Structure probing data (2A3) for a 207-nucleotide construct.
The data come from the RNA Mapping Database (RMDB), library RNAMAK.
Reactivities are given for positions 27 through 156.

[RMDB]
RNA sequence: GGGAACGACUCGAGUAGAGUCGAAAAGGGGUCUGAUCUCUAGCGUGCCCGACGACGUUCUAGACAUGGACUGAAGCCUCCACGGUCCAACAGCUAGAACAUCAGGGUCGGGUCAGACGGAGGCACCCAAACAGGUUGGGAGUUCGCUCCCAACCUGGCUCCAUUGCUUGUUCGCAAGCAAUGGAGCAAAAGAAACAACAACAACAAC
Reactivity to 2A3 in 0.01 (KOAc 150mM, MgCl2 10mM, bicine 150mM(pH8.5), 24C), signal-to-noise 2, nucleotides 027 to 156: g040g000g000g010u000c010u000g000a020u070c080u010c080u240a110g100c110g260u300g000c050c010c000g050a120c010g000a000c030g000u010u010c010u000a010g010a060c060a300u300g010g010a000c000u020g020a060a020g020c010c000u010c000c010a010c000g000g010u010c000c020a140a010c050a030g070c000u000a000g000a000a000c000a010u090c010a020g000g060g040u050c070g010g040g040u000c010a000g000a000c060g010g000a000g010g020c000a060c010c000c000a010a070a000c010a010g000g030u020u040g030g020g010a020g010u110u120c180g120c100u010c130c000c000a020a000c000c000u000g000

For 2A3, 2,000 sequencing reads were counted.